RNA sequence: GGGAACGACUCGAGUAGAGUCGAAAACAAUAUGCAUGGAUCCCAUGUACAAUAUUCAUGCGUAUUAGUAUGCUCGUUCAUGUACAUGGGAACAUGAAAAUGUUAAGUUGAAUUUGAACGAGCAUAAGGUAGACGUACAUUUCGAUGUGCGUCUACCAAAAGAAACAACAACAACAAC
Reactivity to DMS in 0.01 (KOAc 150mM, MgCl2 10mM, bicine 150mM(pH8.5), 24C), signal-to-noise 2, nucleotides 027 to 126: c040a050a020u010a020u020g000c000a000u000g010g010a070u010c040c010c020a000u000g020u000a020c030a150a080u030a050u020u010c020a000u000g020c010g040u010a020u000u040a050g010u020a030u000g000c000u000c000g010u000u010c000a090u010g010u000a010c000a010u000g000g000g010a000a000c010a000u010g000a030a060a070a010u010g000u000u000a060a110g010u030u040g000a070a130u020u020u010g030a000a010c000g000a010g010c010a040u000a070a040
Reactivity to 2A3 in 0.01 (KOAc 150mM, MgCl2 10mM, bicine 150mM(pH8.5), 24C), signal-to-noise 8, nucleotides 027 to 126: c030a000a020u040a020u070g000c000a000u010g000g040a060u040c010c000c000a010u010g000u000a030c050a120a110u080a120u220u120c010a010u030g010c000g010u030a040u040u040a090g200u060a040u070g000c000u000c000g000u000u000c010a020u060g000u020a010c000a010u000g000g000g000a000a010c000a000u020g030a010a010a010a010u030g010u030u040a090a100g040u110u130g180a130a110u110u060u070g000a000a000c000g000a010g000c000a010u020a010a020